The record gives the reactivity of an RNA of 177 nucleotides to 2A3 and DMS.
As a SHAPE reagent, 2A3 marks flexible, mostly unpaired nucleotides at the ribose 2'-OH.
For 2A3 the reverse transcriptase was SuperScript II with manganese.
It was measured as part of the RMDB libraries RFM100 and RFMREP.
The reactions ran in a buffer of 150 mM KOAc, 10 mM MgCl2 and 150 mM bicine (pH 8.5), at 24 C.
Reactivities are given for positions 27 through 126.
DMS adducts were read by reverse transcription with MarathonRT.
RNA sequence: GGGAACGACUCGAGUAGAGUCGAAAAGUCAACACACUUGGCCUGCAGGCCAUGGUGCGAGCAGCUUCCACAGCCUGGCAAGACCUUUGACCGCACAGCCUCCGCGUGGCCGGAGAGGCCGUGUGGUUUUACUCUCGAUCUUCGGAUCGAGAGUAAAAAAAGAAACAACAACAACAAC
Reactivity to 2A3 in 0.01 (KOAc 150mM, MgCl2 10mM, bicine 150mM(pH8.5), 24C), signal-to-noise 4, nucleotides 027 to 126: g050u040c040a080a010c010a030c010a020c100u040u040g030g020c010c020u100g040c120a120g020g000c020c010a020u010g050g000u050g020c020g010a050g030c080a020g000c040u150u030c030c010a030c030a030g020c020c010u020g060g010c030a060a000g030a090c030c020u070u150u150g040a050c000c010g000c010a020c000a020g020c000c010u000c000c010g030c040g100u230g040g040c110c010g030g000a160g010a020g010g000c000c010g000u020g010u010g000g000u060
Reactivity to DMS in 0.01 (KOAc 150mM, MgCl2 10mM, bicine 150mM(pH8.5), 24C), signal-to-noise 3, nucleotides 027 to 126: g000u000c050a090a110c150a070c090a110c020u000u010g020g000c010c020u030g020c130a140g020g010c000c030a050u010g000g000u010g000c010g000a130g040c120a180g030c020u000u000c010c020a070c100a160g020c090c020u000g000g000c060a130a070g000a090c110c070u000u000u040g020a020c000c000g000c040a000c010a040g010c020c000u000c020c000g000c040g050u040g000g020c090c000g010g010a170g000a040g010g010c000c070g010u000g030u000g000g000u050